[RMDB]
RNA sequence: GGGAACGACUCGAGUAGAGUCGAAAACUGACUCUUCCUGAAGAGCUAGCUAGUCGAUCUCGACUAGGAUCCUGAAGCUUCAGUCGACUGAGACUAGUCAGAGGAAGCUGACUAGCUGACUCUAGGAGACUUCGAUCAGGACUGAGACUGAAGAGUCGUAGGAAACCACGUUCGCGUGGUUUCCUACAAAAGAAACAACAACAACAAC
Reactivity to 2A3 in 0.01 (KOAc 150mM, MgCl2 10mM, bicine 150mM(pH8.5), 24C), signal-to-noise 2, nucleotides 027 to 156: c010u000g010a000c010u000c010u060u070c040c080u170g130a150a080g000a050g020c020u000a000g030c000u000a000g000u010c000g120a270u110c200u050c160g010a000c000u000a000g010g020a010u000c000c000u010g030a130a100g090c050u200u120c060a020g020u080c010g020a080c030u030g010a000g010a080c010u020a000g000u020c030a040g030a020g120g110a060a120g130c030u030g020a020c030u030a010g030c020u050g020a020c010u000c020u050a030g020g010a010g000a000c000u050u050c110g120a110u000c000a000g040g000a000c020u030g000a010g020a080c030u050g020a030a010g010a010g030u020c000